Structure probing data (2A3 and DMS) for a 177-nucleotide construct. Conditions: 150 mM KOAc, 10 mM MgCl2 and 150 mM bicine (pH 8.5), 24 C.

[RMDB]
RNA sequence: GGGAACGACUCGAGUAGAGUCGAAAAAGAGGCAGGAAAAGUCACUCUGGAAACAGAUGAAAAAACUGACUUUUGGCGUGAAACAUUUUACGGAUUUACCCGUGAUAGCGGUCAUUUUUUGGGAGUACAGUGAUUACGAGUUCGCUCGUAAUCACUGAAAAGAAACAACAACAACAAC
Reactivity to 2A3 in 0.01 (KOAc 150mM, MgCl2 10mM, bicine 150mM(pH8.5), 24C), signal-to-noise 4, nucleotides 027 to 126: a000g030a000g020g040c020a000g110g080a000a090a040a030g020u030c020a010c100u000c020u000g020g020a030a040a010c010a000g020a030u060g070a120a060a000a010a000a040c060u020g100a050c000u100u040u030u030g040g040c010g030u100g020a070a030a020c020a020u030u030u060u050a060c030g020g020a120u080u160u300a080c020c030c000g010u040g020a030u050a030g120c060g050g010u050c060a090u030u060u040u050u060u140g070g010g020a040g000u030a040
Reactivity to DMS in 0.01 (KOAc 150mM, MgCl2 10mM, bicine 150mM(pH8.5), 24C), signal-to-noise 2, nucleotides 027 to 126: a080g000a090g000g010c010a020g010g010a060a020a070a080g020u010c020a030c190u000c010u000g000g000a160a120a180c000a000g020a010u000g020a040a030a030a050a030a050c080u010g000a010c020u000u010u000u000g010g000c010g070u020g000a060a090a130c070a020u000u000u000u000a050c040g000g020a140u010u020u010a080c060c040c020g000u020g000a050u010a090g030c090g030g020u000c020a020u000u000u000u000u000u000g000g000g000a090g010u000a150

Record summary: For DMS, 3,486 sequencing reads were counted. For 2A3 the reverse transcriptase was SuperScript II with manganese. DMS adducts were read by reverse transcription with MarathonRT. For 2A3, 1,973 sequencing reads were counted.